The record gives the reactivity of an RNA of 177 nucleotides to 2A3 and DMS. Values cover nucleotides 27 to 126. Values are in units of 0.01, from 0 to 300, in steps of 10. The 2A3 profile rests on 8,957 reads. The reactions ran in a buffer of 150 mM KOAc, 10 mM MgCl2 and 150 mM bicine (pH 8.5), at 24 C.

[RMDB]
RNA sequence: GGGAACGACUCGAGUAGAGUCGAAAAGGUGACCUGGACGGGAAGUAGAUCCAGCGACUGCAUCCGAAGCUUUGAUAAGAGCAACUCCAUCUACGUUGCUGAAGUAGGUGGUAGCAGCAAACACCGACGUGAUAUACGAGUUCGCUCGUAUAUCACGAAAAGAAACAACAACAACAAC
Reactivity to 2A3 in 0.01 (KOAc 150mM, MgCl2 10mM, bicine 150mM(pH8.5), 24C), signal-to-noise 8, nucleotides 027 to 126: g030g010u030g020a100c010c020u020g020g030a030c040g040g040g100a150a030g070u170a030g030a160u020c030c030a010g040c030g080a090c010u010g000c000a040u010c040c040g030a060a020g000c020u070u060u110g150a170u240a230a060g020a000g000c030a030a020c010u020c020c000a030u000c000u010a000c030g120u120u180g130c110u160g130a110a020g010u000a000g000g020u030g010g010u010a010g000c010a010g000c010a030a030a010c020a010c000c010g020a030
Reactivity to DMS in 0.01 (KOAc 150mM, MgCl2 10mM, bicine 150mM(pH8.5), 24C), signal-to-noise 5, nucleotides 027 to 126: g000g010u000g000a140c130c020u000g020g010a060c060g020g020g030a140a160g040u020a100g000a160u000c030c000a020g000c110g020a250c010u000g010c020a100u010c030c050g020a120a240g000c010u000u010u010g000a090u060a080a110g010a060g020c030a080a120c070u020c040c050a040u020c060u010a030c070g000u020u000g010c120u030g000a060a080g020u000a010g010g020u000g010g010u000a110g000c080a070g010c050a080a080a120c060a030c010c020g000a190